[RMDB]
RNA sequence: GGGAACGACUCGAGUAGAGUCGAAAAGGACUCGACAUGGAUGACAAUGAUCAGGCGGCGGCACCAACCACAACACCUGAAGUCAACAGCAACAGGCCUCUGCGCCGUACCCGUGUUAGGGGAAUGACAGACUCUCUUACUUCGGUAAGAGAGUCUGAAAAGAAACAACAACAACAAC
Reactivity to 2A3 in 0.01 (KOAc 150mM, MgCl2 10mM, bicine 150mM(pH8.5), 24C), signal-to-noise 4, nucleotides 027 to 126: g060g010a020c030u030c020g010a000c040a030u130g040g060a040u070g060a020c010a020a270u090g060a120u080c010a030g080g000c030g020g000c030g050g000c010a010c070c000a040a040c000c000a070c030a140a040c020a010c020c000u050g040a080a010g040u050c030a040a040c030a030g070c030a000a030c020a080g030g000c000c020u120c070u120g060c100g010c050c000g030u030a020c010c010c030g040u040g070u090u120a180g000g040g010g060a040a070u110g020a020
Reactivity to DMS in 0.01 (KOAc 150mM, MgCl2 10mM, bicine 150mM(pH8.5), 24C), signal-to-noise 3, nucleotides 027 to 126: g000g000a110c020u000c040g010a140c130a110u030g000g050a120u000g050a010c090a130a150u030g030a090u000c090a060g020g000c000g010g000c030g000g050c000a040c040c040a010a060c080c030a110c110a020a080c130a070c040c010u010g020a100a040g000u010c080a080a090c150a070g060c040a060a080c070a060g010g030c070c000u010c050u000g020c090g040c000c000g030u010a040c040c000c010g010u060g000u000u000a130g020g000g010g010a110a030u020g020a260
This 177-nucleotide RNA was probed chemically with 2A3 and DMS. 2A3 adducts were read by reverse transcription with SuperScript II with manganese. The data come from the RNA Mapping Database (RMDB), library OK1LIB. For DMS, 2,958 sequencing reads were counted. Conditions: 150 mM KOAc, 10 mM MgCl2 and 150 mM bicine (pH 8.5), 24 C.